An RNA of 177 nucleotides, treated with 2A3 and DMS and read out base by base. In probing experiments dimethyl sulfate is read out at A N1 and C N3, which are open when not base-paired. For 2A3 the reverse transcriptase was SuperScript II with manganese. The RNA was probed in 150 mM KOAc, 10 mM MgCl2 and 150 mM bicine (pH 8.5) at 24 C. For 2A3, 775 sequencing reads were counted.

RNA sequence: GGGAACGACUCGAGUAGAGUCGAAAAACUGCGAUGCCGAAUAGGGCAAUGAACCCGACCCAAAUCGCGGUAUUCAUUUCCGCUCCGUUUAUCGCUAAUAGAAUCAUGCCGCCGCCAAAGGCGACGGAGAGCUACACCGAUUCGUCGGUGUAGCUCUAAAAGAAACAACAACAACAAC
Reactivity to 2A3 in 0.01 (KOAc 150mM, MgCl2 10mM, bicine 150mM(pH8.5), 24C), signal-to-noise 1, nucleotides 027 to 126: a000c010u040g000c020g010a030u020g070c000c010g030a090a050u130a170g000g020g050c090a000a040u070g010a030a020c020c010c000g020a050c000c050c060a000a100a130u040c010g010c050g010g000u050a130u040u070c000a020u040u000u000c000c010g000c060u060c040c050g000u170u080u190a050u000c020g020c020u040a050a140u120a290g130a150a110u090c050a140u270g090c010c000g010c000c020g000c020c020a230a300a100g000g040c000g000a000c010g050g000
Reactivity to DMS in 0.01 (KOAc 150mM, MgCl2 10mM, bicine 150mM(pH8.5), 24C), signal-to-noise 1, nucleotides 027 to 126: a090c080u020g010c000g010a010u000g020c260c050g000a050a100u010a230g000g000g000c150a060a000u000g000a060a100c260c040c050g000a020c090c090c160a010a200a100u000c020g010c040g000g030u010a040u010u000c000a140u000u000u010c010c010g000c040u000c000c070g000u000u000u000a010u020c020g010c050u000a230a100u020a130g010a080a110u000c110a050u010g000c000c000g000c010c010g000c030c040a100a060a020g000g000c000g030a020c000g000g000